[RMDB]
RNA sequence: GGGAACGACUCGAGUAGAGUCGAAAAGAUAUGGACAACAGGUAGGAAAUAUGGACGAAUUCGGAAACGAACUAUCCAUAUUCCUAUAAUCUGUUGUCCUAAGUCAAAACGCUGCUUCGGCAGCGAACUUACCCAUAGGGUUCGCCCUAUGGGUAAGAAAAGAAACAACAACAACAAC
Reactivity to 2A3 in 0.01 (KOAc 150mM, MgCl2 10mM, bicine 150mM(pH8.5), 24C), signal-to-noise 5, nucleotides 027 to 126: g020a020u060a030u140g000g000a000c000a000a000c010a010g020g030u020a010g010g020a150a090a090u010a010u000g000g030a010c080g150a180a300u010u010c020g010g030a040a070a070c020g000a010a000c030u030a050u000c000c000a010u000a000u000u010c000c000u020a010u050a010a050u070c010u000g000u000u000g000u010c000c000u000a010a000g010u010c010a000a020a080a130c020g000c010u000g000c000u050u050c210g150g000c000a000g000c000g010a000a000
Reactivity to DMS in 0.01 (KOAc 150mM, MgCl2 10mM, bicine 150mM(pH8.5), 24C), signal-to-noise 5, nucleotides 027 to 126: g000a020u000a300u010g000g010a010c000a010a020c000a000g020g010u000a030g010g010a030a040a040u000a000u000g000g020a030c110g010a060a150u000u000c010g010g000a110a090a210c010g010a000a010c050u000a230u000c000c000a000u000a000u000u000c000c000u000a060u010a190a090u010c010u000g000u000u000g000u010c000c000u000a000a070g010u000c030a050a080a080a130c030g020c000u000g000c010u000u010c210g030g010c010a010g020c000g000a010a090
This 177-nucleotide RNA was probed chemically with 2A3 and DMS. The data come from the RNA Mapping Database (RMDB), library TTRDEL. For DMS the reverse transcriptase was MarathonRT.